RNA sequence: GGGAACGACUCGAGUAGAGUCGAAAAUUAGCCAUCCGAGUGGACGUUGUCCUCCUUCGGAUGCCCAGGUCGGACCGCGAGGAGGUGGAGAUGCCAUGCCGACCCGAAGAGGAAAGAAGGACGCGAGCAAGGUCCGGCUUCGGCCGGACCAAAAGAAACAACAACAACAAC
Reactivity to 2A3 in 0.01 (KOAc 150mM, MgCl2 10mM, bicine 150mM(pH8.5), 24C), signal-to-noise 2, nucleotides 027 to 129: u070u080a000g070c030c000a000u000c000c000g000a010g040u060g000g000a030c180g110u120u130g040u070c000c000u030c020c060u020u020c000g000g000a010u000g000c000c000c030a020g000g060u040c040g020g050a070c000c010g000c040g050a080g000g040a000g010g060u100g000g000a080g020a050u120g080c000c000a070u070g070c000c020g010a040c000c000c020g050a030a050g000a010g070g020a010a080a030g040a000a000g000g010a010c080g030c040g030a010g040c020a070a040
Reactivity to DMS in 0.01 (KOAc 150mM, MgCl2 10mM, bicine 150mM(pH8.5), 24C), signal-to-noise 3, nucleotides 027 to 129: u030u030a090g050c080c020a010u040c000c000g000a090g030u030g000g000a020c050g100u040u070g060u010c060c030u000c030c060u040u000c040g060g000a040u000g000c040c020c050a090g020g110u050c020g000g000a090c000c000g000c070g000a130g030g020a070g000g030u040g060g000a000g000a170u020g030c110c000a030u020g040c000c000g040a060c030c100c040g000a030a070g050a070g040g040a060a080a110g020a040a100g000g000a000c040g030c000g070a050g040c060a050a030
About this RNA
An RNA of 170 nucleotides, treated with 2A3 and DMS and read out base by base. The 2A3 profile rests on 4,156 reads. The data come from the RNA Mapping Database (RMDB), library 15KLIB. For DMS the reverse transcriptase was MarathonRT. For 2A3 the reverse transcriptase was SuperScript II with manganese. Conditions: 150 mM KOAc, 10 mM MgCl2 and 150 mM bicine (pH 8.5), 24 C.